[RMDB]
RNA sequence: GGGAACGACUCGAGUAGAGUCGAAAACUAGUGAUCCGGCGGCCCCACGUGGGAGGGCCGUCGCUCAACGGAUAAAAGGUACUCCGGGGAUAACAGGCUGAUCUUGCCCAAGAGUCCACAUCGACGGACGAUCCGGAUGAUUCGUCAUCCGGAUCGUAAAAGAAACAACAACAACAAC
Reactivity to 2A3 in 0.01 (KOAc 150mM, MgCl2 10mM, bicine 150mM(pH8.5), 24C), signal-to-noise 2, nucleotides 027 to 126: c000u070a030g070u000g030a020u000c030c010g000g000c000g000g000c010c000c000c000a130c200g300u300g020g080g010a080g000g000g000c000c000g030u000c000g000c000u050c010a120a000c010g040g000a040u090a050a110a060a040g190g030u080a040c040u000c020c000g000g000g020g000a000u030a130a020c000a070g000g000c030u060g030a090u070c000u050u180g010c000c000c000a050a010g040a000g100u000c000c010a030c020a120u130c130g100a040c050g050g020
Reactivity to DMS in 0.01 (KOAc 150mM, MgCl2 10mM, bicine 150mM(pH8.5), 24C), signal-to-noise 1, nucleotides 027 to 126: c100u000a050g010u020g000a050u000c290c020g040g000c000g000g050c000c000c000c040a190c300g000u000g030g060g010a170g000g030g000c000c000g010u000c030g010c270u000c020a000a100c000g000g010a190u000a180a000a000a190g020g010u020a120c280u000c080c170g000g000g000g000a040u020a120a120c110a010g000g040c020u000g000a000u050c120u000u000g000c010c000c000a070a030g000a080g000u020c000c000a080c000a210u000c030g000a030c140g000g020

Chemical mapping of a 177-nucleotide RNA with 2A3 and DMS. For 2A3 the reverse transcriptase was SuperScript II with manganese. The RNA was probed in 150 mM KOAc, 10 mM MgCl2 and 150 mM bicine (pH 8.5) at 24 C. For DMS, 1,133 sequencing reads were counted. DMS adducts were read by reverse transcription with MarathonRT. Source: RMDB library RFM100, as collected in RNAgym. In probing experiments dimethyl sulfate is read out at A N1 and C N3, which are open when not base-paired. As a SHAPE reagent, 2A3 marks flexible, mostly unpaired nucleotides at the ribose 2'-OH.